An RNA of 177 nucleotides, treated with DMS and read out base by base. The reactions ran in a buffer of 150 mM KOAc, 10 mM MgCl2 and 150 mM bicine (pH 8.5), at 24 C. Values cover nucleotides 27 to 126. Source: RMDB library M2PK90, as collected in RNAgym.
RNA sequence: GGGAACGACUCGAGUAGAGUCGAAAAAUAAAACUGCGAAGGGGGGACGGAGAAGGCUAUGUUGGCCGGGCGACGGUUGUCCCGGUUUAAGCGUGUAGCCUGGUUUUCCAGGCAAAUCCAAAAAAAACAAGUAUUUUAGUUUCGACUAAAAUACUUGAAAAGAAACAACAACAACAAC
Reactivity to DMS in 0.01 (KOAc 150mM, MgCl2 10mM, bicine 150mM(pH8.5), 24C), signal-to-noise 1, nucleotides 027 to 126: a100u000a090a040a030a050c100u020g010c050g000a050a110g030g000g040g010g010g000a030c040g020g000a090g010a080a040g010g000c050u000a040u000g010u000u000g000g010c010c010g000g000g030c300g000a050c110g000g020u010u000g000u020c000c010c010g020g010u010u000u020a020a100g010c060g010u000g020u000a120g000c000c010u000g000g010u000u000u020u000c000c000a020g010g000c010a010a060a040u000c030c050a000a000a020a030a020a050a060a240